RNA sequence: GGGAACGACUCGAGUAGAGUCGAAAAGGUAUCGAUCUCACGGCGAUGAUGGCGCAGGGCAUUACGAUGGGCGAUGAGUUCCAUCAACGCAAUAUUGCUUCCUCUGCACUGUUAAUGCGUGCGCUGGCCUGAUCAUACGGUUCGCCGUAUGAUCAGGAAAAGAAACAACAACAACAAC
Reactivity to DMS in 0.01 (KOAc 150mM, MgCl2 10mM, bicine 150mM(pH8.5), 24C), signal-to-noise 3, nucleotides 027 to 126: g020g030u000a060u010c040g000a120u000c040u020c090a080c040g000g000c030g030a070u020g000a050u000g010g020c050g010c010a040g020g010g020c090a030u000u000a080c130g020a020u010g010g020g020c000g000a170u000g000a300g030u000u010c040c010a020u000c010a070a070c230g010c040a060a090u000a120u010u000g030c040u000u000c110c050u000c060u000g010c010a080c100u000g020u000u000a030a060u010g030c050g010u000g010c030g000c010u000g010g020
Reactivity to 2A3 in 0.01 (KOAc 150mM, MgCl2 10mM, bicine 150mM(pH8.5), 24C), signal-to-noise 3, nucleotides 027 to 126: g110g050u080a050u170c040g020a050u040c060u030c070a050c030g060g000c040g030a050u080g030a040u140g060g000c020g000c040a010g050g050g000c030a020u050u030a040c070g020a030u030g010g020g000c050g060a090u170g040a060g050u190u090c000c000a010u000c020a010a010c040g040c010a020a050u150a140u230u100g030c010u050u070c010c040u000c040u030g000c020a020c030u060g010u130u070a130a060u130g040c040g020u060g000c020g010c000u010g050g000

The record gives the reactivity of an RNA of 177 nucleotides to DMS and 2A3. The 2A3 profile rests on 3,510 reads. The DMS profile rests on 3,307 reads. The data come from the RNA Mapping Database (RMDB), library OK2TRN. The RNA was probed in 150 mM KOAc, 10 mM MgCl2 and 150 mM bicine (pH 8.5) at 24 C.